[RMDB]
Source: RMDB library OK1LIB, as collected in RNAgym. This 177-nucleotide RNA was probed chemically with DMS and 2A3. The RNA was probed in 150 mM KOAc, 10 mM MgCl2 and 150 mM bicine (pH 8.5) at 24 C. The DMS profile rests on 21,471 reads.
RNA sequence: GGGAACGACUCGAGUAGAGUCGAAAAGGUGUGUAUCGCACGGUUCCACCAGUGUGAGAAGGCUCCGGUGGAUUGCUCUAUUGGUUUGGGCUGUGUAAUGGUUGCGCGCUGAGGGUAUGACCAUUGGCUAAAUAUUAAUAUUCGUAUUAAUAUUUAGAAAAGAAACAACAACAACAAC
Reactivity to DMS in 0.01 (KOAc 150mM, MgCl2 10mM, bicine 150mM(pH8.5), 24C), signal-to-noise 5, nucleotides 027 to 126: g010g010u010g010u010g010u010a020u010c030g000c010a010c020g010g000u000u010c010c190a030c010c000a060g020u010g010u000g000a040g010a220a090g000g000c040u010c050c080g010g020u010g010g010a070u010u020g000c030u010c020u010a030u010u000g000g010u010u020u020g010g000g000c010u000g010u000g010u000a080a060u020g010g010u000u010g000c040g000c040g010c040u010g000a130g000g000g030u000a050u010g000a070c020c020a100u020u010g010g000
Reactivity to 2A3 in 0.01 (KOAc 150mM, MgCl2 10mM, bicine 150mM(pH8.5), 24C), signal-to-noise 4, nucleotides 027 to 126: g040g000u020g000u000g000u020a020u060c010g000c010a000c000g000g020u140u060c010c000a010c010c000a020g020u030g000u030g050a020g040a050a020g110g000c020u010c030c030g050g000u050g000g040a060u020u120g020c000u000c010u020a050u000u070g030g000u020u040u060g010g000g000c000u010g000u000g010u040a050a040u090g020g010u030u050g020c020g000c000g000c010u010g010a050g040g010g010u030a070u100g040a030c010c010a050u050u060g030g000